[RMDB]
RNA sequence: GGGAACGACUCGAGUAGAGUCGAAAACACAAGAGAUGGAUGACCCCUCCAUCAAAGGGAGUUAGGUACAUGGCAUUACUAAUAUGAGGUACUUACUAUAAGUUAUCCCCACACACGUGGCUGUGUCGCAUAGUCUCGGAUUCGUCCGAGACUAUGCAAAAGAAACAACAACAACAAC
Reactivity to 2A3 in 0.01 (KOAc 150mM, MgCl2 10mM, bicine 150mM(pH8.5), 24C), signal-to-noise 2, nucleotides 027 to 126: c030a000c040a100a050g050a080g000a110u080g000g020a010u040g120a080c000c020c000c010u000c010c020a110u110c090a110a020a000g070g010g020a060g000u130u100a040g070g010u050a030c040a060u100g230g000c010a010u050u090a090c080u170a090a150u150a090u210g050a050g000g060u010a010c010u010u030a040c020u040a060u040a230a040g020u030u020a060u060c030c000c040c000a020c000a000c000a000c060g120u050g030g030c090u040g000u020g030u110c050
Reactivity to DMS in 0.01 (KOAc 150mM, MgCl2 10mM, bicine 150mM(pH8.5), 24C), signal-to-noise 2, nucleotides 027 to 126: c030a090c140a060a030g070a300g000a000u000g000g020a070u000g000a270c030c030c010c200u010c010c000a040u000c100a010a170a080g000g000g030a020g020u020u000a020g000g000u010a020c020a050u010g010g010c040a070u010u020a150c100u010a080a100u000a030u000g000a090g000g040u000a010c040u010u000a090c160u000a080u010a030a030g000u000u000a140u000c000c010c010c090a050c090a020c140a050c130g000u010g020g030c050u000g000u000g020u000c190